[RMDB]
An RNA of 207 nucleotides, treated with 2A3 and read out base by base.
It was measured as part of the RMDB library OK3TST.
Values cover nucleotides 27 to 156.
The reactions ran in a buffer of 150 mM KOAc, 10 mM MgCl2 and 150 mM bicine (pH 8.5), at 24 C.
RNA sequence: GGGAACGACUCGAGUAGAGUCGAAAACUUCUUCUGCUGCCUUGAUUCACAUGGUGCCAUCCACUCAAUCAUUCAUUCAUUCCGCCAGCCUGUACUUGGCACCUCCUAUUCUCAGCACGGUGUAGAAUAUAGGGAUGGAAGAAUGGAGGCGAAGACACCUUGUUACGCCUUUCGAGGCGUAACAAGGAAAAGAAACAACAACAACAAC
Reactivity to 2A3 in 0.01 (KOAc 150mM, MgCl2 10mM, bicine 150mM(pH8.5), 24C), signal-to-noise 1, nucleotides 027 to 156: c030u020u030c000u050u010c040u120g040c000u050g020c010c000u050u080g090a070u060u070c150a070c030a140u090g070g000u040g040c000c000a080u010c060c020a120c100u060c010a100a100u060c030a190u020u020c000a000u070u050c000a010u060u000c020c000g060c010c000a080g000c050c030u110g020u130a140c080u110u090g060g000c000a010c010c020u040c000c000u010a050u090u120c010u070c120a060g010c050a010c240g060g010u050g000u050a060g000a070a040u090a030u040a030g000g030g020a050u140g020g040a020a000g000a060a000u000g030g030a010g000g030c040g010a000a000g050a020c020a050